[RMDB]
RNA sequence: GGGAACGACUCGAGUAGAGUCGAAAAUAUCAGGGAUUUUAGAAGUCGUGGAAUAGCCAUUAUCAAAGGCGAUUUGAUACACAAAAGGCUUGAUCGCACUCCCAAAUUGCCGUUUGGCUUGCGUGGCUAGCACGAGCAUAUUCGUAUGCUCGUGCUAAAAAGAAACAACAACAACAAC
Reactivity to DMS in 0.01 (KOAc 150mM, MgCl2 10mM, bicine 150mM(pH8.5), 24C), signal-to-noise 2, nucleotides 027 to 126: u000a090u060c050a150g000g000g000a110u000u010u000u010a150g010a130a040g010u000c030g030u000g000g000a070a090u000a030g000c030c020a060u000u000a030u010c170a030a020a090g000g020c100g000a060u010u000u000g010a100u000a040c240a050c160a040a090a120a110g000g020c010u000u000g020a090u010c100g010c060a100c130u000c000c000c040a000a030a070u000u000g020c010c000g010u000u020u000g020g010c070u000u000g050c070g010u000g010g030c100
Reactivity to 2A3 in 0.01 (KOAc 150mM, MgCl2 10mM, bicine 150mM(pH8.5), 24C), signal-to-noise 1, nucleotides 027 to 126: u130a050u090c010a000g040g000g040a070u010u090u020u090a130g080a200a020g050u070c080g000u020g070g020a070a020u050a040g100c020c020a030u080u100a170u200c060a080a000a000g090g010c050g000a000u010u000u100g060a050u040a050c130a040c000a170a080a000a040g000g020c020u010u080g050a010u040c060g000c080a040c110u060c000c000c070a000a000a080u000u010g070c030c000g000u050u150u110g000g000c080u020u080g070c020g000u050g060g000c000